Notes: The record gives the reactivity of an RNA of 207 nucleotides to DMS and 2A3. The DMS profile rests on 2,608 reads. For 2A3 the reverse transcriptase was SuperScript II with manganese. Conditions: 150 mM KOAc, 10 mM MgCl2 and 150 mM bicine (pH 8.5), 24 C. Values are in units of 0.01, from 0 to 300, in steps of 10.
[RMDB]
RNA sequence: GGGAACGACUCGAGUAGAGUCGAAAAGGGACGCCUUUAGAAGAAGAGGCUAGGUGGCAUUCCGGUGUGGGAUACUUGGUAAUAUGUAACGCUAAUUGCAUAAGAUUGUAGGACGGAAUUUACAGUCAAAACGGUCCUGCGUUCGCGCAGGACCGAACCCAGAAAGAUAGUUCGCUAUCUUUCUGGGAAAAGAAACAACAACAACAAC
Reactivity to DMS in 0.01 (KOAc 150mM, MgCl2 10mM, bicine 150mM(pH8.5), 24C), signal-to-noise 1, nucleotides 027 to 156: g000g010g020a110c080g020c010c000u010u000u000a060g010a120a210g010a140a120g000a090g020g030c030u010a060g020g040u000g010g040c020a140u010u000c040c020g030g010u010g010u000g010g000g020a070u000a020c100u000u000g000g020u000a040a070u000a040u000g050u000a080a070c030g000c090u010a110a130u000u000g000c000a050u010a110a170g010a090u000u000g020u000a040g060g010a120c030g010g010a080a200u000u000u000a040c000a050g020u000c000a040a030a080a070c010g040g020u010c000c000u000g000c000g010u000u000c300g010c040g080c010a020g000g010a000c000c010g000a000a020
Reactivity to 2A3 in 0.01 (KOAc 150mM, MgCl2 10mM, bicine 150mM(pH8.5), 24C), signal-to-noise 3, nucleotides 027 to 156: g020g010g010a020c080g020c020c020u080u070u080a160g030a220a000g020a040a000g010a020g030g000c040u040a010g000g060u030g040g000c030a050u080u050c040c010g030g020u090g030u060g040g000g020a040u060a100c080u050u110g020g000u080a060a040u060a070u120g040u050a050a010c030g000c140u060a100a030u130u030g010c000a020u030a100a060g020a040u030u100g010u050a020g000g040a020c040g010g010a010a010u070u060u070a070c050a020g030u020c030a030a030a070a060c030g000g000u010c000c000u010g020c000g010u010u040c040g000c010g000c040a000g000g020a000c000c000g000a000a000